The data come from the RNA Mapping Database (RMDB), library RFM100.
This 177-nucleotide RNA was probed chemically with 2A3 and DMS.
For 2A3 the reverse transcriptase was SuperScript II with manganese.
Reactivities are given for positions 27 through 126.

[RMDB]
RNA sequence: GGGAACGACUCGAGUAGAGUCGAAAACUAGACUAGUGGCAGACUUAAGAUGGCGGCGUUUGCAUGGGAUGUAGUAGCCGCAUGCUUACCGGGAGUGGCAAGGCGGCUAAAGAAUAAAUCUACUAACCCUAUACGUGCGGUUCGCCGCACGUAUAGGAAAAGAAACAACAACAACAAC
Reactivity to 2A3 in 0.01 (KOAc 150mM, MgCl2 10mM, bicine 150mM(pH8.5), 24C), signal-to-noise 4, nucleotides 027 to 126: c010u010a030g110a020c020u000a030g050u020g040g020c020a030g000a040c040u140u110a190a020g020a090u090g040g010c020g010g010c010g060u020u040u050g020c040a040u020g000g010g060a040u130g030u070a060g010u020a020g020c010c000g000c000a010u000g000c000u150u160a060c020c020g050g090g060a170g040u070g020g000c050a150a210g060g000c000g000g000c000u020a060a060a000g050a030a050u150a200a020a010u010c000u020a030c010u020a040a070c050
Reactivity to DMS in 0.01 (KOAc 150mM, MgCl2 10mM, bicine 150mM(pH8.5), 24C), signal-to-noise 2, nucleotides 027 to 126: c010u020a040g040a100c040u000a080g000u020g000g000c040a070g030a050c110u000u000a090a030g030a080u000g010g020c040g000g030c060g000u000u000u030g040c070a090u000g020g070g000a150u000g000u020a000g050u040a030g050c020c000g030c020a010u020g000c000u020u040a070c020c040g000g020g050a250g040u020g010g000c000a020a090g020g020c020g000g020c020u010a020a030a070g020a150a040u010a030a030a050u000c020u000a110c050u000a100a200c240
The RNA was probed in 150 mM KOAc, 10 mM MgCl2 and 150 mM bicine (pH 8.5) at 24 C.